[RMDB]
RNA sequence: GGGAACGACUCGAGUAGAGUCGAAAAUCGGUGUUACCCUCGGUGACCUUCUUCUUGCUUUGCGGCGCGCCAGAAGUUCCGUGAGUACCAGCAUCAAGGGUAAUGGUCUCAUACUUUGGGUUAUAGUACCUAUUUUAUAGUUCGCUAUAAAAUAGGUAAAAGAAACAACAACAACAAC
Reactivity to DMS in 0.01 (KOAc 150mM, MgCl2 10mM, bicine 150mM(pH8.5), 24C), signal-to-noise 9, nucleotides 027 to 126: u010c110g020g020u000g010u000u000a050c020c010c010u000c070g010g010u000g000a110c080c040u000u010c050u000u000c050u010u000g010c060u000u010u010g030c050g010g000c060g010c100g000c090c130a080g000a080a120g000u000u000c020c030g010u000g010a050g010u000a050c110c080a070g020c060a040u000c050a050a040g000g000g010u000a030a050u010g000g010u000c020u000c040a080u000a070c100u000u000u010g020g010g010u000u000a190u000a110g010u000
Reactivity to 2A3 in 0.01 (KOAc 150mM, MgCl2 10mM, bicine 150mM(pH8.5), 24C), signal-to-noise 8, nucleotides 027 to 126: u080c020g070g030u080g030u070u040a030c010c010c000u000c030g030g010u040g090a150c030c000u100u050c010u080u030c010u050u090g020c020u050u080u170g020c020g020g000c010g010c010g020c040c000a130g030a240a020g050u090u010c030c010g020u020g010a010g010u050a070c030c030a010g040c010a030u030c030a040a030g050g010g010u050a040a020u050g020g010u010c010u010c030a080u100a130c040u080u080u100g070g020g010u090u120a130u050a150g100u050

Source: RMDB library OK2TST, as collected in RNAgym. Structure probing data (DMS and 2A3) for a 177-nucleotide construct. The RNA was probed in 150 mM KOAc, 10 mM MgCl2 and 150 mM bicine (pH 8.5) at 24 C. For 2A3 the reverse transcriptase was SuperScript II with manganese. DMS adducts were read by reverse transcription with MarathonRT. The DMS profile rests on 18,387 reads.